[RMDB]
Structure probing data (DMS and 2A3) for a 177-nucleotide construct.
DMS adducts were read by reverse transcription with MarathonRT.
Conditions: 150 mM KOAc, 10 mM MgCl2 and 150 mM bicine (pH 8.5), 24 C.
DMS (dimethyl sulfate) methylates the pairing face of unpaired adenines and cytosines.
The data come from the RNA Mapping Database (RMDB), library OK2TRN.

RNA sequence: GGGAACGACUCGAGUAGAGUCGAAAAAAGACGGUGUAACCCUAAACGUUCUCUGCAUAAUCUGAACGAAUGAGAAAUUCGGGAUACGACGAGGUUCGAAAGGCCCCAAACUUGGGCUCGACAACCAACGACUAGGUUAUUUCGAUAACCUAGUCGUAAAAGAAACAACAACAACAAC
Reactivity to DMS in 0.01 (KOAc 150mM, MgCl2 10mM, bicine 150mM(pH8.5), 24C), signal-to-noise 2, nucleotides 027 to 126: a080a080g010a090c050g010g000u000g000u020a010a060c010c000c020u000a120a140a170c090g000u000u000c020u000c000u010g010c180a100u010a110a050u020c080u000g010a090a120c040g010a030a030u000g000a110g000a040a090a050u000u000c100g000g010g010a110u000a030c060g000a040c090g000a120g020g020u000u000c020g010a090a060a130g000g020c010c000c010c300a020a040a090c300u000u010g000g000g010c020u000c000g000a170c220a010a070c030c010a110
Reactivity to 2A3 in 0.01 (KOAc 150mM, MgCl2 10mM, bicine 150mM(pH8.5), 24C), signal-to-noise 2, nucleotides 027 to 126: a000a000g200a030c090g000g020u050g010u010a010a030c030c000c000u030a080a090a000c070g060u040u000c020u000c010u010g030c040a160u060a300a200u290c090u120g080a140a000c050g020a090a010u090g000a020g080a110a050a030u070u070c030g020g010g000a000u030a080c020g010a000c030g070a060g060g000u020u050c030g020a040a070a040g060g000c020c000c000c060a110a230a110c130u110u170g000g030g000c030u010c000g000a030c000a010a000c040c010a050